[RMDB]
RNA sequence: GGGAACGACUCGAGUAGAGUCGAAAAAUAUUGGGAAGUCUUGGCCUUGCUACAAUCGCAUGUAGAAUCAUCAGGGACGGAAAUAUAUCUAAAUUAGGCCGGACCCGAAUUAAAGACCUUCAACAAGCCUAUGGACGUAUUUCGAUACGUCCAUAGGAAAAGAAACAACAACAACAAC
Reactivity to 2A3 in 0.01 (KOAc 150mM, MgCl2 10mM, bicine 150mM(pH8.5), 24C), signal-to-noise 2, nucleotides 027 to 126: a030u070a040u030u050g030g000g000a140a080g080u020c040u230u300g080g000c000c000u020u060g040c000u010a050c020a080a140u120c130g020c160a050u040g020u040a020g030a100a110u160c040a010u060c080a100g000g000g060a010c020g060g070a030a100a030u200a010u040a030u060c020u060a090a150a190u100u050a020g030g040c000c000g120g000a070c000c010c010g010a000a010u030u010a000a000a050g060a020c010c070u090u090c060a110a110c050a110a000g110
Reactivity to DMS in 0.01 (KOAc 150mM, MgCl2 10mM, bicine 150mM(pH8.5), 24C), signal-to-noise 2, nucleotides 027 to 126: a110u020a030u010u000g000g000g010a110a190g020u000c010u010u000g080g030c040c040u000u000g000c010u000a020c020a040a040u000c300g020c240a130u000g000u000a020g000a040a090u000c140a070u010c130a050g010g020g020a110c300g000g000a050a030a030u020a080u000a110u000c090u000a050a050a210u000u000a030g030g020c000c020g000g000a080c010c000c000g010a020a080u020u000a060a080a110g000a090c080c050u000u020c110a020a080c190a080a080g010

Source information:
This 177-nucleotide RNA was probed chemically with 2A3 and DMS. For 2A3 the reverse transcriptase was SuperScript II with manganese. It was measured as part of the RMDB library OK2TRN. For DMS, 1,341 sequencing reads were counted.